[RMDB]
RNA sequence: GGGAACGACUCGAGUAGAGUCGAAAAAGCACGGUUUUUGAGGACGCAUUUUGUCCGUGCGGUAAUGCCCUCCUUUACACUUUCUCGCAUGGUGCGGGAGUGUGGAGAGGAAACACAAGCUAGUCUCGAUAGGCGGUUAACUUCGGUUAACCGCCAACUCAUUCUUACGGUUCGCCGUAAGAAUGAGAAAAGAAACAACAACAACAAC
Reactivity to DMS in 0.01 (KOAc 150mM, MgCl2 10mM, bicine 150mM(pH8.5), 24C), signal-to-noise 1, nucleotides 027 to 156: a170g050c020a020c020g000g010u000u000u000u000u000g000a100g030g020a130c070g000c110a150u000u000u010u010g020u000c010c000g040u020g020c020g030g010u000a100a030u010g000c030c020c000u010c000c010u000u000u000a040c010a060c010u000u000u000c010u000c020g000c000a300u020g070g020u010g030c000g030g000g000a030g000u010g020u000g000g000a020g000a020g000g010a010a040a060c040a050c210a090a120g030c030u000a160g030u000c020u000c040g010a170u000a140g040g000c010g030g040u000u000a000a010c010u000u000c250g040g000u030u020a000a000c010c000g010c000c050a000a020
Reactivity to 2A3 in 0.01 (KOAc 150mM, MgCl2 10mM, bicine 150mM(pH8.5), 24C), signal-to-noise 3, nucleotides 027 to 156: a000g000c010a000c000g000g060u010u010u010u050u090g070a140g040g010a020c020g030c120a080u050u040u030u030g020u000c000c010g000u000g000c010g060g040u180a070a060u160g060c020c000c000u040c000c010u010u020u050a010c000a000c010u050u230u030c030u030c010g030c030a100u240g210g070u280g140c010g000g000g000a000g000u020g000u030g030g010a040g000a020g030g010a020a070a010c020a000c000a030a030g010c020u110a020g010u020c010u040c080g060a070u090a170g000g020c000g000g020u000u000a000a020c000u020u070c280g040g000u010u000a010a000c000c000g010c000c000a010a000